Background
Structure probing data (2A3 and DMS) for a 177-nucleotide construct. 2A3 adducts were read by reverse transcription with SuperScript II with manganese.
[RMDB]
RNA sequence: GGGAACGACUCGAGUAGAGUCGAAAACGAGGAAUCCGUCGAUCCGGUCAUCGGUUGCUCCGUUCUCCUGUACUGGUGGUGCUGUCGAAAGCGUUCGGGUUCCGGUCGACCAGUUCGUCGAAGAAAGUCACUCGGGUAUCUUCGGAUACCCGAGUGAAAAAGAAACAACAACAACAAC
Reactivity to 2A3 in 0.01 (KOAc 150mM, MgCl2 10mM, bicine 150mM(pH8.5), 24C), signal-to-noise 3, nucleotides 027 to 126: c050g020a030g090g060a100a060u060c010c000g020u040c030g010a020u030c000c090g000g090u070c090a030u090c020g030g030u160u170g020c100u020c080c020g000u110u000c050u020c000c030u110g060u120a080c020u090g010g020u040g050g070u120g050c000u070g040u120c040g040a080a060a040g010c010g010u000u070c040g020g030g000u050u020c000c020g000g050u010c030g030a020c000c000a020g040u050u110c030g000u010c020g030a090a090g050a090a130a010g100
Reactivity to DMS in 0.01 (KOAc 150mM, MgCl2 10mM, bicine 150mM(pH8.5), 24C), signal-to-noise 1, nucleotides 027 to 126: c030g050a090g010g000a050a010u000c000c170g020u020c050g010a110u010c000c050g000g010u000c060a060u000c070g000g020u000u000g000c050u020c010c060g000u030u000c090u050c020c040u000g010u020a060c010u000g080g040u020g000g000u010g000c060u000g020u090c160g030a140a070a110g000c000g040u030u000c000g030g000g010u000u000c020c070g020g000u030c060g000a080c020c000a130g000u000u000c060g010u010c000g010a180a090g040a020a060a180g000